[RMDB]
RNA sequence: GGGAACGACUCGAGUAGAGUCGAAAAGUGAUAAAUGGUUCAAACCGCGAAUAAAUAGGGGACGUGUGAUGGCAAAAGAUGUCGAUGAAAUCGCCAUUACACGCGCGAUCAUUGGCGCUAUCGCAUCUACAUGUAAAUAUUUUAACGCCAUCGUCCGGUUCCUCGAACUAUUCGUAGUUCGAGGAACAAAAGAAACAACAACAACAAC
Reactivity to 2A3 in 0.01 (KOAc 150mM, MgCl2 10mM, bicine 150mM(pH8.5), 24C), signal-to-noise 2, nucleotides 027 to 156: g050u020g050a050u110a180a150a100u160g030g000u110u110c090a020a030a030c000c000g010c030g000a100a040u040a080a050a050u080a050g030g000g000g010a000c000g000u040g050u030g030a000u000g000g030c050a000a000a130a080g040a060u160g050u110c030g000a010u070g050a010a070a170u050c010g000c010c010a000u090u090a050c050a030c070g030c010g020c000g010a000u110c010a050u020u030g020g010c050g040c070u060a050u030c010g020c050a040u020c040u070a050c020a060u100g070u230a050a190a030u140a100u030u100u000u110a110a060c030g010c010c000a010u030c020g020u000c000c040g090

The record gives the reactivity of an RNA of 207 nucleotides to 2A3. The 2A3 profile rests on 617 reads. It was measured as part of the RMDB library OK3TST.